RNA sequence: GGGAACGACUCGAGUAGAGUCGAAAAGAAAGAAAAAGAAAUCAUCAAAUGAGGUCAAACGUCAGAAUUUCGGGCGUAAAUCCGUCAUUAUGCAGAAAGCCGACCUCGAUGUCGUUUAGAAAGAAAAAUUUAGGGUAAUCUUCGGAUUACCCUAAAUAAAAGAAACAACAACAACAAC
Reactivity to 2A3 in 0.01 (KOAc 150mM, MgCl2 10mM, bicine 150mM(pH8.5), 24C), signal-to-noise 4, nucleotides 027 to 126: g070a020a070a000g090a020a130a010a020a000g180a040a140a050u100c100a040u000c030a010a060a110u140g020a010g020g010u010c020a050a130a090c030g040u050c030a020g090a160a060u080u110u120c030g020g010g000c010g070u100a040a060a000u020c000c000g040u000c000a010u000u030a030u080g030c030a020g100a150a020a000g040c040c050g000a000c000c010u000c020g000a010u110g000u020c020g010u030u030u060a100g070a060a150a010g070a040a050a030a020
Reactivity to DMS in 0.01 (KOAc 150mM, MgCl2 10mM, bicine 150mM(pH8.5), 24C), signal-to-noise 3, nucleotides 027 to 126: g020a080a090a100g000a070a060a060a090a070g020a040a060a070u020c070a060u020c060a110a050a080u050g010a040g000g010u000c050a060a100a090c130g010u040c000a020g000a010a070u020u010u010c010g010g000g010c020g000u120a040a110a080u020c020c000g000u010c030a000u000u010a050u000g010c070a130g000a110a100a100g020c210c190g020a040c040c020u000c000g000a060u000g020u000c040g000u000u000u000a090g000a070a040a060g030a020a050a040a100